The record gives the reactivity of an RNA of 177 nucleotides to DMS. The RNA was probed in 150 mM KOAc, 10 mM MgCl2 and 150 mM bicine (pH 8.5) at 24 C.

RNA sequence: GGGAACGACUCGAGUAGAGUCGAAAAAGCUGUUGGGUUGGUUGCGUUCUUACAGUUUCAUUUUAUGAGAAAUAUUUAUGACGUUGUUGUGAAGAAGACCGAAACAGUGGAUAUAGAAAUUGAUAGACUUGACUAUCUGUUUCGACAGAUAGUCAAGAAAAGAAACAACAACAACAAC
Reactivity to DMS in 0.01 (KOAc 150mM, MgCl2 10mM, bicine 150mM(pH8.5), 24C), signal-to-noise 1, nucleotides 027 to 126: a150g020c030u000g000u010u000g020g000g010u000u000g010g000u010u010g020c140g000u000u000c030u010u030a080c060a080g020u000u010u040c000a060u010u020u020u010a030u010g010a170g000a080a070a060u000a060u010u010u000a070u020g000a010c110g040u000u020g000u000u000g040u000g000a140a090g000a100a150g020a030c050c020g040a070a020a020c080a060g020u000g000g010a130u000a060u020a130g000a040a060a080u000u010g000a040u000a140g000a120